[RMDB]
RNA sequence: GGGAACGACUCGAGUAGAGUCGAAAACAUCAUAUUCAUCAUAUGGAUCAACAUUACUUUUGAUUGUACCUGCAAAUAGAAUAGGGUCCUGAGGGAUGAUAGUAAUGGAACGACGUAAUGUAACGAGCCACCGUACGCCAUUCGUGGCGUACGGUGGAAAAGAAACAACAACAACAAC
Reactivity to 2A3 in 0.01 (KOAc 150mM, MgCl2 10mM, bicine 150mM(pH8.5), 24C), signal-to-noise 1, nucleotides 027 to 126: c000a000u220c040a000u140a020u040u060c080a020u000c000a000u140a000u000g080g000a000u110c250a170a140c000a110u000u300a170c080u000u000u000u270g100a300u000u300g060u290a150c060c050u020g000c000a040a060a000u070a300g200a090a020u080a080g050g140g000u040c000c000u050g020a180g000g300g000a000u000g000a080u000a000g170u250a230a100u040g040g000a070a090c000g110a000c030g000u000a000a000u300g060u120a000a060c000g000a000g000
An RNA of 177 nucleotides, treated with 2A3 and read out base by base. The reactions ran in a buffer of 150 mM KOAc, 10 mM MgCl2 and 150 mM bicine (pH 8.5), at 24 C. Reactivities are given for positions 27 through 126.